[RMDB]
RNA sequence: GGGAACGACUCGAGUAGAGUCGAAAAGUCUGGUAUAGUGCAACAGCAGAACAAUUUGCUGAGGGCUAUUGAGGCGCAACAGCAUCUGUUGCAACUCACAGUCUGGGGCAUCAAGCAGCUCCAGGCAUUGGUAAUGGAUCUUCGGAUCCAUUACCAAAAAAGAAACAACAACAACAAC
Reactivity to 2A3 in 0.01 (KOAc 150mM, MgCl2 10mM, bicine 150mM(pH8.5), 24C), signal-to-noise 2, nucleotides 027 to 126: g040u010c040u020g010g030u130a050u020a090g080u040g070c030a060a060c020a050g020c010a010g050a100a120c120a270a160u060u010u120g000c000u030g010a040g010g060g000c000u030a060u040u270g060a060g000g000c040g000c040a040a070c000a020g130c040a090u090c090u040g000u000u000g000c000a020a000c000u000c020a030c060a010g010u000c000u020g000g000g000g040c000a030u110c030a050a040g130c090a000g000c020u020c000c000a000g000g030c060a090
Reactivity to DMS in 0.01 (KOAc 150mM, MgCl2 10mM, bicine 150mM(pH8.5), 24C), signal-to-noise 3, nucleotides 027 to 126: g010u000c010u010g000g020u020a000u020a020g020u000g050c050a070a220c050a010g000c100a060g030a040a150c230a040a120u030u000u000g030c010u020g010a160g030g030g000c020u000a020u020u010g000a010g000g000c270g010c010a010a040c000a000g010c180a150u090c040u000g000u000u000g030c010a010a160c020u000c050a090c300a080g010u000c000u000g000g000g000g010c010a060u000c180a060a150g070c240a070g010c010u010c000c000a000g010g010c010a020